Chemical mapping of a 177-nucleotide RNA with DMS and 2A3. For DMS, 3,312 sequencing reads were counted. The data come from the RNA Mapping Database (RMDB), library TTRDEL. For 2A3, 4,367 sequencing reads were counted. Conditions: 150 mM KOAc, 10 mM MgCl2 and 150 mM bicine (pH 8.5), 24 C.
[RMDB]
RNA sequence: GGGAACGACUCGAGUAGAGUCGAAAAGAUAUGGAGGUCGUCGAUAAGAAUCAUAUCGGAAACGAUAUAUUCUUUUGACGACGCUACUCCUAAGUCAAACAGCAGCACUCUUCGGAGUGCUGCUGAACAUUCUGUAUUGCUUCGGCAAUACAGAAUGAAAAGAAACAACAACAACAAC
Reactivity to DMS in 0.01 (KOAc 150mM, MgCl2 10mM, bicine 150mM(pH8.5), 24C), signal-to-noise 4, nucleotides 027 to 126: g010a050u010a300u010g010g000a020g010g030u000c000g000u000c000g010a020u020a010a010g010a020a010u000c210a010u000a000u000c000g000g000a150a090a160c000g000a010u010a010u000a030u000u000c000u000u010u000u000g010a020c000g010a020c020g000c270u000a280c030u000c000c000u010a080a160g010u000c040a110a140a270c000a010g020c000a010g000c010a020c000u000c000u000u030c230g010g010a020g020u000g010c000u000g000c000u000g000a020a100
Reactivity to 2A3 in 0.01 (KOAc 150mM, MgCl2 10mM, bicine 150mM(pH8.5), 24C), signal-to-noise 2, nucleotides 027 to 126: g030a000u110a060u200g010g000a010g000g050u030c000g000u000c010g040a080u050a300a040g000a020a000u090c170a000u080a000u010c000g040g000a060a050a010c020g010a000u000a000u010a020u030u040c000u030u060u000u030g000a000c000g000a000c000g000c000u050a060c010u000c000c000u030a080a010g060u030c070a080a110a200c010a070g050c020a000g000c000a010c000u000c010u120u240c300g070g020a020g010u010g030c000u000g000c000u010g010a000a000